[RMDB]
RNA sequence: GGGAACGACUCGAGUAGAGUCGAAAAAGCCUGGCUUACGAGCCAGGCAAGCUAUUUAUAUCAUUACCAAAUUGCACACUUAACAUAACUGUUAAAUGUGCAAACUGGUAAUGAAAUAAAUACUGAAAUACAAAACUGUUUUCGAACAGUUUUGUAUAAAAGAAACAACAACAACAAC
Reactivity to DMS in 0.01 (KOAc 150mM, MgCl2 10mM, bicine 150mM(pH8.5), 24C), signal-to-noise 4, nucleotides 027 to 126: a100g000c000c000u000g000g040c000u000u000a090c120g010a030g030c000c000a010g020g010c010a020a000g010c140u000a000u000u000u000a000u000a060u000c000a000u000u000a010c010c000a010a140a270u000u000g000c010a000c000a010c060u000u000a000a000c000a030u010a110a170c300u000g010u000u000a000a000a010u000g000u000g000c000a000a000a040c200u000g000g000u000a000a000u000g000a000a060a010u000a000a010a000u000a010c020u000g000a120a090
Reactivity to 2A3 in 0.01 (KOAc 150mM, MgCl2 10mM, bicine 150mM(pH8.5), 24C), signal-to-noise 5, nucleotides 027 to 126: a000g010c000c000u000g000g000c000u050u040a070c220g080a010g000c000c000a000g000g000c000a000a000g010c000u010a000u000u000u000a010u000a000u000c000a000u000u000a000c000c000a010a100a190u010u000g000c010a000c000a000c000u020u010a000a000c010a030u240a300a100c030u010g000u000u010a010a020a010u010g000u000g000c000a000a010a000c020u000g000g000u000a000a000u000g000a000a000a000u000a000a000a000u020a020c040u040g060a130a080